[RMDB]
RNA sequence: GGGAACGACUCGAGUAGAGUCGAAAAGGGAUCGCGGACCGAGGGCGGAAGCCUGCUUCAGACAGGAGUAAUCCCAGUAGAAACAGGGUUUUCACCCUUCCUUUCUUCGGGUUUCCUUCCUCUGCUUGCGGCCUCGCCCGGAGUCUUCGAAUCCAGCCAUUUACUACUCCUUCGGGAGUAGUAAAUGAAAAGAAACAACAACAACAAC
Reactivity to DMS in 0.01 (KOAc 150mM, MgCl2 10mM, bicine 150mM(pH8.5), 24C), signal-to-noise 1, nucleotides 027 to 156: g030g000g010a180u000c050g000c040g020g000a030c040c010g010a300g020g020g000c010g060g000a060a100g010c000c000u000g030c030u000u010c080a100g000a040c120a050g000g000a100g000u010a030a140u010c020c040c020a230g010u000a060g020a030a040a030c060a080g000g040g050u010u000u000u010c160a110c000c000c010u010u000c060c010u000u010u000c040u000u010c020g020g030g040u000u000u010c100c000u000u000c030c010u000c020u000g020c080u010u000g020c030g000g020c030c020u000c020g000c000c000c010g010g000a170g010u010c060u010u000c040g020a100a110u000c010c040a180g030c070
Reactivity to 2A3 in 0.01 (KOAc 150mM, MgCl2 10mM, bicine 150mM(pH8.5), 24C), signal-to-noise 4, nucleotides 027 to 156: g080g000g010a010u000c000g000c030g010g010a000c010c010g000a030g000g010g000c040g050g020a050a020g010c020c090u180g010c010u020u000c010a030g000a070c140a110g010g030a010g030u080a030a050u050c000c000c090a080g030u030a000g000a090a040a240c300a160g000g000g020u090u110u270u300c160a050c000c000c000u010u010c000c000u000u000u000c010u020u030c010g000g010g000u000u050u000c000c000u050u100c010c000u010c000u020g060c220u020u040g010c000g000g000c020c010u010c000g010c000c000c010g010g010a000g000u000c000u000u010c000g020a040a050u010c000c000a000g030c000
This 207-nucleotide RNA was probed chemically with DMS and 2A3. It was measured as part of the RMDB library VIROID. For 2A3 the reverse transcriptase was SuperScript II with manganese. For 2A3, 4,258 sequencing reads were counted. DMS adducts were read by reverse transcription with MarathonRT.